[RMDB]
RNA sequence: GGGAACGACUCGAGUAGAGUCGAAAAACUGAUACCUUACGAGGUAUUAGAAUGACUUCGUGGUAGAGCGCCACGAACGGAAAAUAAAGAAAGCUCGAUUGAAACGCACCGUGUACGCACGGUGCGAAAAAGUCGAUCCAGUUCGCUGGAUCGACAAGUAUAUACCAUGGUUCGCCAUGGUAUAUACAAAAGAAACAACAACAACAAC
Reactivity to DMS in 0.01 (KOAc 150mM, MgCl2 10mM, bicine 150mM(pH8.5), 24C), signal-to-noise 1, nucleotides 027 to 156: a190c010u030g000a010u000a020c010c000u000u000a220c190g040a060g030g000u000a000u000u010a000g010a110a160u020g000a160c040u000u000c020g030u010g000g050u030a040g030a010g060c000g000c020c000a010c000g000a000a050c080g000g000a080a070a040a060u000a040a110a140g020a070a070a090g020c040u000c000g060a230u000u010g000a100a090a140c010g010c010a010c000c020g130u000g040u000a090c300g020c020a030c010g000g030u000g000c010g000a000a020a020a110a080g000u000c000g030a010u000c040c010a000g010u000u010c230g000c010u000g000g000a010u010c010g020a000c030a000a020
Reactivity to 2A3 in 0.01 (KOAc 150mM, MgCl2 10mM, bicine 150mM(pH8.5), 24C), signal-to-noise 3, nucleotides 027 to 156: a000c000u000g000a000u000a000c000c010u050u020a080c240g110a020g000g010u000a000u000u000a000g020a060a150u110g040a070c050u000u000c010g010u010g000g040u070a160g030a000g040c040g000c020c000a000c000g000a020a000c040g070g040a040a040a030a040u070a030a000a030g170a030a040a000g050c020u000c020g160a180u070u240g070a130a090a000c000g000c000a000c000c020g010u010g040u040a020c170g000c070a000c010g000g030u010g000c000g020a010a010a000a000a000g000u000c000g000a000u000c000c010a000g010u040u060c160g060c100u000g000g000a000u000c000g010a000c000a000a000
Conditions: 150 mM KOAc, 10 mM MgCl2 and 150 mM bicine (pH 8.5), 24 C. An RNA of 207 nucleotides, treated with DMS and 2A3 and read out base by base. Reactivities are given for positions 27 through 156. The data come from the RNA Mapping Database (RMDB), library M2RFPK. DMS adducts were read by reverse transcription with MarathonRT. The DMS profile rests on 2,133 reads.